Chemical mapping of a 177-nucleotide RNA with 2A3 and DMS. Values cover nucleotides 27 to 126. The DMS profile rests on 2,653 reads. For 2A3, 1,046 sequencing reads were counted. The reactions ran in a buffer of 150 mM KOAc, 10 mM MgCl2 and 150 mM bicine (pH 8.5), at 24 C.
[RMDB]
RNA sequence: GGGAACGACUCGAGUAGAGUCGAAAAUGCGUCACCAGGUCAGUGCAUGCCUGUGUGUCUCCACAGGAGGGUUUGAUCUGUGUCGGAGCGUAUGGUGUACAGAUCCAUGAGUGGCUCGUGCUGCGACUGGAGGAGGUAACUUCGGUUACCUCCUCCAAAAAGAAACAACAACAACAAC
Reactivity to 2A3 in 0.01 (KOAc 150mM, MgCl2 10mM, bicine 150mM(pH8.5), 24C), signal-to-noise 1, nucleotides 027 to 126: u110g030c000g030u000c000a020c080c000a020g000g040u000c000a030g050u050g200c010a040u130g030c000c000u000g000u000g000u040g100u080c070u020c080c010a000c000a000g030g000a070g020g080g000u040u040u120g010a050u010c020u050g090u050g110u100c060g040g030a030g000c020g040u050a040u090g060g000u070g000u070a050c060a050g060a050u040c020c000a030u020g020a010g060u100g030g010c000u010c100g040u100g000c040u090g020c030g080a120c060
Reactivity to DMS in 0.01 (KOAc 150mM, MgCl2 10mM, bicine 150mM(pH8.5), 24C), signal-to-noise 2, nucleotides 027 to 126: u000g020c050g000u000c040a080c040c040a050g000g010u000c030a050g010u020g020c040a080u030g020c010c000u000g020u000g010u000g040u020c060u000c220c010a020c010a030g020g010a140g000g020g000u000u030u020g010a020u000c020u000g010u010g030u000c060g030g000a090g000c040g050u010a040u000g010g020u000g000u000a090c150a060g000a070u000c020c040a060u000g010a140g020u000g010g020c050u000c120g000u010g010c040u000g010c030g000a160c160